[RMDB]
RNA sequence: GGGAACGACUCGAGUAGAGUCGAAAAGACUGCAGCAACAACACGGAUGACUGCAAACAGGCGGCCUGUUUCUACGGAGCCACGUGCAUCGAUGGCGUUGGCAGCUUCUAUUGCCAGUGUACGAAGGGCUUACUCUUGUGUUCGCACAAGAGUAAGCAAAAGAAACAACAACAACAAC
Reactivity to DMS in 0.01 (KOAc 150mM, MgCl2 10mM, bicine 150mM(pH8.5), 24C), signal-to-noise 3, nucleotides 027 to 126: g000a140c100u010g020c040a060g010c030a060a110c050a070a090c080a080c200g000g010a110u000g000a050c040u000g010c050a060a070a100c100a050g000g010c090g000g010c050c000u000g000u000u010u010c060u000a100c130g010g000a180g000c010c010a070c060g000u010g010c070a040u010c070g000a070u000g000g000c030g010u010u000g030g010c070a080g000c140u000u000c130u010a060u000u000g030c010c010a020g020u010g020u000a060c090g010a110a130g020g010
Reactivity to 2A3 in 0.01 (KOAc 150mM, MgCl2 10mM, bicine 150mM(pH8.5), 24C), signal-to-noise 2, nucleotides 027 to 126: g030a000c050u020g000c010a020g030c010a030a060c010a000a060c020a050c120g120g020a060u060g060a110c030u010g000c000a040a020a010c060a020g050g000c010g090g050c010c020u050g030u030u070u050c040u020a050c050g070g010a020g010c020c050a060c030g040u030g000c040a020u060c050g170a130u070g000g000c040g020u010u050g040g020c030a040g020c000u150u040c030u120a110u040u090g020c000c010a030g020u020g000u060a030c040g010a060a040g060g020
An RNA of 177 nucleotides, treated with DMS and 2A3 and read out base by base. The DMS profile rests on 2,481 reads.